[RMDB]
RNA sequence: GGGAACGACUCGAGUAGAGUCGAAAAUGAGACACCUUCGGGUGUCUCACAUUAAGCUGACCAGCUAUGAGGUCAAUAUCGUCAUGCACAAAUAGAUUAAAACAGCUUGCUCCUUCGGGAGCAAGAACUUCUAUCACCUCUUCGGAGGUGAUAGAAGAAAAGAAACAACAACAACAAC
Reactivity to DMS in 0.01 (KOAc 150mM, MgCl2 10mM, bicine 150mM(pH8.5), 24C), signal-to-noise 2, nucleotides 027 to 126: u000g000a000g000a000c000a010c000c000u000u010c150g020g040g010u000g000u000c010u000c000a010c080a040u010u000a070a120g010c040u010g000a150c000c010a180g010c060u000a040u000g010a080g000g010u000c050a060a070u000a030u010c140g020u000c040a070u020g040c060a090c130a090a070a020u020a130g020a100u010u010a040a030a030a090c110a130g000c010u020u010g000c000u000c000c000u000u000c160g040g010g010a020g030c020a000a000g000a040a170
Reactivity to 2A3 in 0.01 (KOAc 150mM, MgCl2 10mM, bicine 150mM(pH8.5), 24C), signal-to-noise 2, nucleotides 027 to 126: u040g000a000g000a010c000a000c000c010u000u070c240g020g000g040u000g010u000c000u000c000a000c000a000u050u060a070a010g060c010u010g040a050c010c030a020g020c020u140a100u170g090a060g030g030u010c060a070a050u180a050u110c090g060u020c030a060u090g000c070a040c000a070a120a050u170a070g160a130u120u300a110a110a010a070c050a010g050c000u010u010g000c010u000c000c000u000u040c170g060g010g000a010g000c000a000a000g000a000a000